[RMDB]
The record gives the reactivity of an RNA of 177 nucleotides to 2A3 and DMS. The RNA was probed in 150 mM KOAc, 10 mM MgCl2 and 150 mM bicine (pH 8.5) at 24 C. High DMS reactivity at an A or C suggests that its Watson-Crick edge is free. For DMS, 1,137 sequencing reads were counted.
RNA sequence: GGGAACGACUCGAGUAGAGUCGAAAAUCUACCAGAAUGAUCAACAGUUCGUUGCGCUCAACGAAAACCUUGCCGAGUUCACCGACUGGUUCACCAAAUCCGACCAUGACUUGGCCGACACGGUGGAUAAGUUUUUCUCCUUCGGGAGAAAAACUUAAAAAGAAACAACAACAACAAC
Reactivity to 2A3 in 0.01 (KOAc 150mM, MgCl2 10mM, bicine 150mM(pH8.5), 24C), signal-to-noise 2, nucleotides 027 to 126: u060c010u080a050c000c010a090g170a050a230u170g010a110u070c020a030a200c040a030g190u090u000c000g000u000u000g010c060g070c080u100c040a030a010c110g080a030a030a060a060c000c010u060u090g030c000c000g040a040g020u050u010c020a010c030c000g010a040c040u020g000g040u070u080c000a020c020c020a120a000a020u030c020c010g100a110c040c100a030u070g070a180c070u030u050g000g000c000c000g000a040c010a000c150g040g020u070g030g000a030
Reactivity to DMS in 0.01 (KOAc 150mM, MgCl2 10mM, bicine 150mM(pH8.5), 24C), signal-to-noise 1, nucleotides 027 to 126: u000c030u000a160c000c070a120g030a140a120u060g020a240u000c060a120a180c080a090g000u000u000c070g000u020u000g000c150g000c100u000c000a060a060c070g030a130a050a090a100c020c110u010u000g000c000c000g000a050g010u000u010c020a130c090c060g020a050c120u020g000g000u000u000c010a110c030c120a000a180a150u000c080c000g000a110c000c050a000u020g110a080c110u000u000g000g000c070c030g000a070c060a000c240g000g070u020g000g000a130